[RMDB]
RNA sequence: GGGAACGACUCGAGUAGAGUCGAAAAAGUUCAGGUACGUCCAGCAGACAUGGUAAGGGUCUCCAAGGUCAGACUGUUCAGUCGUGGCUCAGCAUCACGAUUGACAAACAAUCCUGCAGUUGUUAUUGCAUACAGACUUUGUCCAGAGGCAGUAUACCCUGAAACUGAUAUUCGUAUCAGUUUCAGGAAAAGAAACAACAACAACAAC
Reactivity to 2A3 in 0.01 (KOAc 150mM, MgCl2 10mM, bicine 150mM(pH8.5), 24C), signal-to-noise 2, nucleotides 027 to 156: a010g090u120u050c030a010g000g020u020a000c020g010u010c010c010a010g000c000a010g030a090c030a080u100g030g040u120a110a100g050g030g000u020c060u000c070c030a020a030g120g000u020c000a000g020a020c010u060g040u090u050c020a000g000u000c010g020u000g000g000c010u080c250a060g040c050a090u040c000a000c000g030a010u000u020g010a020c020a000a060a010c030a000a120u090c020c020u060g000c040a040g010u020u000g040u040u080a080u070u100g050c040a020u070a140c040a070g080a110c030u070u090u250g040u040c030c060a050g010a060g060g000c020a010g030u010a040u070a130c010
Reactivity to DMS in 0.01 (KOAc 150mM, MgCl2 10mM, bicine 150mM(pH8.5), 24C), signal-to-noise 2, nucleotides 027 to 156: a050g000u000u000c020a050g020g030u010a060c000g000u000c000c000a140g030c050a070g020a170c090a150u000g030g010u010a090a100g000g000g040u000c030u000c100c050a050a150g020g000u010c040a070g030a040c020u010g020u000u000c020a040g050u010c000g020u010g000g030c050u020c260a180g010c080a140u000c010a010c040g000a040u000u010g020a050c080a080a040a070c080a050a120u010c040c040u000g030c150a090g010u000u010g030u000u000a030u000u000g000c000a220u010a050c080a080g030a120c060u000u000u000g020u000c010c060a170g000a110g030g000c040a220g030u010a090u000a120c160